[RMDB]
RNA sequence: GGGAACGACUCGAGUAGAGUCGAAAAGGCAACCGUGCGGGCGGGCAGUGGCUCGGCGUUCGGGCGCGGAUCGCAUCCGGCGACCAGCAUCGCGGGGACGUGCGGCGGCCACAGCUGGGCGAGUGGAUCUCUGUAGCGCUUUCGAGCGCUACAGAGAAAAAGAAACAACAACAACAAC
Reactivity to 2A3 in 0.01 (KOAc 150mM, MgCl2 10mM, bicine 150mM(pH8.5), 24C), signal-to-noise 1, nucleotides 027 to 126: g050g000c110a020a000c000c020g010u110g050c030g020g030g030c020g030g010g050c000a070g080u040g100g020c010u000c000g170g010c020g010u070u150c020g010g030g010c120g000c040g100g030a100u040c100g010c000a010u030c040c040g120g010c000g040a180c000c060a040g020c000a050u100c050g070c020g030g000g010g060a050c070g020u100g000c030g050g000c000g000g000c000c010a030c000a000g110c010u080g000g030g000c010g010a070g050u030g030g000a080
An RNA of 177 nucleotides, treated with 2A3 and read out base by base. Source: RMDB library OK1LIB, as collected in RNAgym. The 2A3 profile rests on 622 reads. Reactivities are given for positions 27 through 126. Values are in units of 0.01, from 0 to 300, in steps of 10. The RNA was probed in 150 mM KOAc, 10 mM MgCl2 and 150 mM bicine (pH 8.5) at 24 C. 2A3 adducts were read by reverse transcription with SuperScript II with manganese.